[RMDB]
RNA sequence: GGGAACGACUCGAGUAGAGUCGAAAAGAGCUGUAGUACAGCAAGAAGCACGCGAUCCUUGGCACCGCGUGCAAGAGAAUGAGGCCGGCAAAGAAGGAAAGCCGGCAUAAGUGCCAAGUAAGAGAGAGGAGCAGUAAAUAUUCGUAUUUACUGCUCCAAAAGAAACAACAACAACAAC
Reactivity to 2A3 in 0.01 (KOAc 150mM, MgCl2 10mM, bicine 150mM(pH8.5), 24C), signal-to-noise 4, nucleotides 027 to 126: g130a030g010c010u010g000u120a090g060u160a090c000a000g040c010a010a010g130a070a020g010c000a000c010g010c000g000a040u100c030c000u000u000g010g000c000a000c000c010g000c000g000u000g000c010a020a000g010a010g020a050a100u280g030a130g180g050c000c010g000g000c030a070a130a090g180a110a030g160g070a220a090a010g000c010c000g000g000c000a000u000a010a020g000u000g000c000c040a000a000g010u020a010a040g090a000g030a000g010a060
Reactivity to DMS in 0.01 (KOAc 150mM, MgCl2 10mM, bicine 150mM(pH8.5), 24C), signal-to-noise 3, nucleotides 027 to 126: g000a230g000c030u000g030u000a220g010u000a300c010a000g020c000a070a150g000a100a060g000c030a000c000g000c000g040a090u050c060c000u000u010g000g000c000a000c000c060g040c000g010u000g000c000a020a020g000a170g020a120a050u020g010a150g040g000c000c000g000g020c050a070a070a170g020a280a220g020g020a040a170a070g020c000c050g000g000c020a020u020a000a060g000u020g000c000c020a010a000g000u210a070a210g010a080g000a070g010a200

Chemical mapping of a 177-nucleotide RNA with 2A3 and DMS. Source: RMDB library OK1LIB, as collected in RNAgym. Conditions: 150 mM KOAc, 10 mM MgCl2 and 150 mM bicine (pH 8.5), 24 C. Reactivities are given for positions 27 through 126.